[RMDB]
RNA sequence: GGGAACGACUCGAGUAGAGUCGAAAAUUAAUGAAGCAAAUCUCCAAACGCCAACGAUGAGCGUUUCGCAAUCGACGCUUAAGGCUUUUGCCGAGGCUGCUUGAGCCUUGUUACCAAAGAAAAGCCGAAAACCCAAAUGUCUUCGGACAUUUGGGAACGUAACUAAUGUGUUCGCACAUUAGUUACGAAAAGAAACAACAACAACAAC
Reactivity to 2A3 in 0.01 (KOAc 150mM, MgCl2 10mM, bicine 150mM(pH8.5), 24C), signal-to-noise 4, nucleotides 027 to 156: u140u090a020a060u120g080a080a010g020c040a060a060a100u040c050u020c060c010a060a070a060c050g000c020c030a090a060c100g120a160u180g030a020g020c010g000u040u040u080c080g010c070a040a080u110c060g030a010c040g010c000u050u070a090a030g000g000c000u000u020u020u050g050c030c020g010a000g020g000c010u040g050c060u090u130g060a000g010c000c010u010u010g060u070u110a080c040c030a030a000a030g040a020a050a030a000g030c040c020g060a080a090a050a080c000c000c010a000a000a000u010g000u000c010u020u050c200g070g000a000c000a000u000u000u000g000g000g000a000a000
Reactivity to DMS in 0.01 (KOAc 150mM, MgCl2 10mM, bicine 150mM(pH8.5), 24C), signal-to-noise 2, nucleotides 027 to 156: u000u000a060a130u010g020a110a090g010c030a060a060a070u000c020u020c030c020a020a090a020c040g000c020c040a100a170c060g000a150u020g010a090g050c030g010u000u000u010c060g020c080a080a120u000c020g020a050c030g000c020u000u000a070a090g010g040c010u000u000u000u000g020c020c060g000a100g010g020c000u000g000c090u010u010g000a120g040c000c010u000u000g020u010u000a140c040c060a050a100a150g010a120a050a010a060g030c040c050g000a030a020a030a130c000c000c010a010a030a020u000g010u000c000u000u000c300g030g010a050c000a040u000u000u010g010g000g000a000a010

This 207-nucleotide RNA was probed chemically with 2A3 and DMS. For 2A3 the reverse transcriptase was SuperScript II with manganese. For 2A3, 3,241 sequencing reads were counted. The reactions ran in a buffer of 150 mM KOAc, 10 mM MgCl2 and 150 mM bicine (pH 8.5), at 24 C.